This 177-nucleotide RNA was probed chemically with DMS and 2A3. Reactivities are rounded to 0.1 and cut off at 0 and 3. The reactions ran in a buffer of 150 mM KOAc, 10 mM MgCl2 and 150 mM bicine (pH 8.5), at 24 C.

[RMDB]
RNA sequence: GGGAACGACUCGAGUAGAGUCGAAAAAUCCAUGGUCAUCCACUUUAUAAAUACAUAAAAGGACAGUUUUAUGAUUGUCAGCUUUGAGUUGAGGAUAUGUUCCAGACAUCUUAGUUUCCCUUACUUAUCCGUUUUCAUCAUUCGUGAUGAAAACGGAAAAAGAAACAACAACAACAAC
Reactivity to DMS in 0.01 (KOAc 150mM, MgCl2 10mM, bicine 150mM(pH8.5), 24C), signal-to-noise 1, nucleotides 027 to 126: a010u000c000c000a140u020g020g000u000c010a050u000c010c030a110c070u010u000u020a090u020a060a080a090u000a150c080a060u030a070a050a080a060g020g010a020c030a020g020u010u000u010u010a130u020g010a020u000u000g000u030c030a080g030c020u000u000u010g000a080g060u000u000g000a050g030g000a090u000a040u040g010u030u000c030c000a050g000a060c050a000u000c010u000u000a040g000u010u000u000c000c000c000u010u010a000c060u010u000a130
Reactivity to 2A3 in 0.01 (KOAc 150mM, MgCl2 10mM, bicine 150mM(pH8.5), 24C), signal-to-noise 4, nucleotides 027 to 126: a020u050c020c010a050u080g000g040u030c020a070u040c040c010a060c000u000u070u030a070u060a080a170a030u110a020c030a010u130a110a060a000a010g090g010a030c000a020g010u000u000u040u090a230u210g060a030u060u010g000u030c010a020g050c030u140u070u090g050a090g020u030u010g060a020g040g000a030u020a050u300g060u060u020c000c000a000g020a000c000a040u010c020u060u060a040g020u020u030u010c000c000c020u010u070a120c020u000u040a040
DMS adducts were read by reverse transcription with MarathonRT. The data come from the RNA Mapping Database (RMDB), libraries RFM100 and RFMREP.